[RMDB]
RNA sequence: GGGAACGACUCGAGUAGAGUCGAAAACAGCAAAAAGGAACCGAUUCCAACCAAGUUCGGAAAGAGAUACCGGGCGAGGCGCUGAAGAAAGAAUCUCGCUUCAGACACCCCAAGGACUCGACUGAAGAAUGCACGCCAUCGUUCGCGAUGGCGUGAACACAAAACAAUACUUCGGUAUUGUUUUGUGAAAAGAAACAACAACAACAAC
Reactivity to DMS in 0.01 (KOAc 150mM, MgCl2 10mM, bicine 150mM(pH8.5), 24C), signal-to-noise 1, nucleotides 027 to 156: c030a070g090c070a060a070a040a150a120g000g010a110a200c040c050g000a190u000u010c030c020a050a160c020c050a070a190g010u000u000c000g000g020a040a040a130g020a130g030a240u000a120c030c030g000g000g020c050g040a150g000g020c020g030c000u020g020a020a040g000a040a080a100g000a050a150u000c050u000c030g060c010u020u010c090a020g010a300c030a090c010c000c020c030a060a130g000g000a040c020u010c020g010a130c090u020g020a120a120g020a110a090u000g020c000a000c040g020c010c010a000u000c000g010u000u000c300g060c020g000a010u000g000g020c000g000u000g000a010a080
Reactivity to 2A3 in 0.01 (KOAc 150mM, MgCl2 10mM, bicine 150mM(pH8.5), 24C), signal-to-noise 1, nucleotides 027 to 156: c030a010g110c030a030a020a050a130a130g050g020a040a020c070c040g040a160u140u000c010c010a000a050c040c010a110a020g020u030u030c020g030g030a120a150a030g060a010g020a020u060a120c020c000g020g000g000c100g010a050g000g080c140g040c050u070g010a040a020g040a030a300a000g080a130a190u050c110u080c170g000c000u010u020c020a050g040a110c010a100c030c000c000c060a030a070g020g000a040c010u020c040g040a050c050u100g030a030a030g060a110a050u140g020c000a000c000g000c000c000a000u000c000g030u090u080c170g020c020g140a000u000g000g000c000g000u000g000a030a000